[RMDB]
Structure probing data (2A3 and DMS) for a 177-nucleotide construct. The 2A3 profile rests on 1,099 reads. The reactions ran in a buffer of 150 mM KOAc, 10 mM MgCl2 and 150 mM bicine (pH 8.5), at 24 C.
RNA sequence: GGGAACGACUCGAGUAGAGUCGAAAAUGAAAUAACUAGCAUGCAUAAGACGAGGUAGAGCGCGCGCUCUACCAAAAGAUGUGUGUAAAAACGCUCGUGUAGGCGCGGCUACACAAAUAAACAAAAACGUGUUAAGAUGAUUCGUCAUCUUAACACGAAAAGAAACAACAACAACAAC
Reactivity to 2A3 in 0.01 (KOAc 150mM, MgCl2 10mM, bicine 150mM(pH8.5), 24C), signal-to-noise 1, nucleotides 027 to 126: u150g020a080a050a090u120a050a050c110u070a020g050c000a010u030g010c010a000u000a040a110g100a080c070g050a040g030g000u000a010g000a010g000c130g010c060g050c130g010c150u030c010u020a010c020c000a000a000a000a000g010a000u010g010u000g010u000g000u070a010a100a050a040a020c030g040c050u080c170g000u030g020u030a040g020g020c060g080c140g150g130c000u000a000c000a010c010a010a100a040u120a020a040a020c040a030a040a000a040a000
Reactivity to DMS in 0.01 (KOAc 150mM, MgCl2 10mM, bicine 150mM(pH8.5), 24C), signal-to-noise 2, nucleotides 027 to 126: u010g000a130a090a030u010a160a090c030u000a130g020c010a050u020g000c000a040u010a040a150g030a160c240g000a220g000g010u000a000g030a060g000c040g030c300g040c300g000c000u010c000u000a030c000c000a010a010a030a100g000a020u000g000u000g020u000g000u010a030a080a090a070a130c100g010c060u000c160g000u000g010u000a060g000g010c000g020c090g000g010c050u000a030c010a010c010a090a040a030u000a010a010a080c100a000a100a060a040a080

In probing experiments dimethyl sulfate is read out at A N1 and C N3, which are open when not base-paired.